[RMDB]
Structure probing data (2A3 and DMS) for a 207-nucleotide construct. The 2A3 profile rests on 762 reads. 2A3 adducts were read by reverse transcription with SuperScript II with manganese.
RNA sequence: GGGAACGACUCGAGUAGAGUCGAAAAUUCACAGACUAACUGAAGGCGGGUCCUUCUCUUCAAUGGGAAGGCCUAAAUUAUAGUCGAUCUACCCUGUCACCAGGGAUAGAAAAAUGUUGUACACACCGCCCGUCGCUACUACCGAUUGAAUGGCUCACGUAAGGAGAUAGUUCGCUAUCUCCUUACGAAAAGAAACAACAACAACAAC
Reactivity to 2A3 in 0.01 (KOAc 150mM, MgCl2 10mM, bicine 150mM(pH8.5), 24C), signal-to-noise 2, nucleotides 027 to 156: u130u120c030a040c030a070g060a050c000u050a080a040c070u180g210a030a010g080g010c100g020g000g050u140c000c000u020u040c000u000c040u220u210c180a160a280u270g000g000g010a000a000g030g000c000c000u000a010a010a000u050u040a050u000a060g020u030c010g000a010u000c000u020a030c000c000c000u030g090u160c070a070c100c000a040g030g000g020a020u010a020g060a000a110a010a000a000u060g000u040u030g020u070a050c070a010c000a020c090c040g000c000c000c000g080u070c020g050c020u100a120c000u060a070c030c040g030a020u110u110g120a090a130u070g100g000c010u020c050a060
Reactivity to DMS in 0.01 (KOAc 150mM, MgCl2 10mM, bicine 150mM(pH8.5), 24C), signal-to-noise 1, nucleotides 027 to 156: u020u000c060a060c020a240g010a020c030u020a030a130c130u020g010a080a000g000g020c200g010g000g000u010c030c000u000u010c010u000c010u020u010c130a120a090u010g060g000g000a030a050g010g020c100c010u000a050a060a050u000u000a050u000a010g010u000c030g020a230u000c000u000a030c000c030c000u000g020u010c130a170c230c120a250g000g010g010a040u000a010g000a010a080a080a080a040u000g020u010u000g000u000a130c090a120c030a060c010c010g050c000c000c000g050u000c070g000c040u000a030c070u000a110c040c010g050a110u030u010g000a090a080u020g010g000c010u000c050a210